RNA sequence: GGGAACGACUCGAGUAGAGUCGAAAAGAAAGAAAGCCGAAGCAGCGAAAGAGGUCAAACGUCAGGAUUUCGGGCAUAAAAACGACAUUAUGCAGAAAGCCGACUUCAAUGUCGUAAACAAAGAAAACCUAUCGCGGAUAUUCGUAUCCGCGAUAGGAAAAGAAACAACAACAACAAC
Reactivity to 2A3 in 0.01 (KOAc 150mM, MgCl2 10mM, bicine 150mM(pH8.5), 24C), signal-to-noise 1, nucleotides 027 to 126: g100a000a050a000g050a060a080a000g010c010c010g020a040a030g030c110a010g000c020g020a130a010a030g070a060g020g010u070c030a060a000a060c040g010u000c010a010g010g000a020u010u050u040c050g000g090g000c010a040u060a040a100a010a060a040c060g030a000c000a030u030u000a040u110g000c000a000g090a050a040a000g070c000c050g050a030c010u030u080c060a080a080u080g000u020c020g110u110a090a060a040c170a090a060a000g080a040a040a000a000
Reactivity to DMS in 0.01 (KOAc 150mM, MgCl2 10mM, bicine 150mM(pH8.5), 24C), signal-to-noise 1, nucleotides 027 to 126: g010a020a080a150g000a120a070a140g000c000c020g000a070a080g110c100a110g030c000g000a090a070a070g070a090g000g000u000c070a000a110a120c220g000u000c080a030g040g000a120u000u000u000c020g020g000g030c000a020u000a000a000a040a220a000c050g000a050c090a060u000u000a050u000g050c120a180g000a010a110a070g020c000c020g010a050c070u000u000c110a010a010u020g000u020c070g040u000a000a020a100c090a000a040a020g000a060a140a120a030
Record summary
Conditions: 150 mM KOAc, 10 mM MgCl2 and 150 mM bicine (pH 8.5), 24 C. The record gives the reactivity of an RNA of 177 nucleotides to 2A3 and DMS. As a SHAPE reagent, 2A3 marks flexible, mostly unpaired nucleotides at the ribose 2'-OH. DMS adducts were read by reverse transcription with MarathonRT.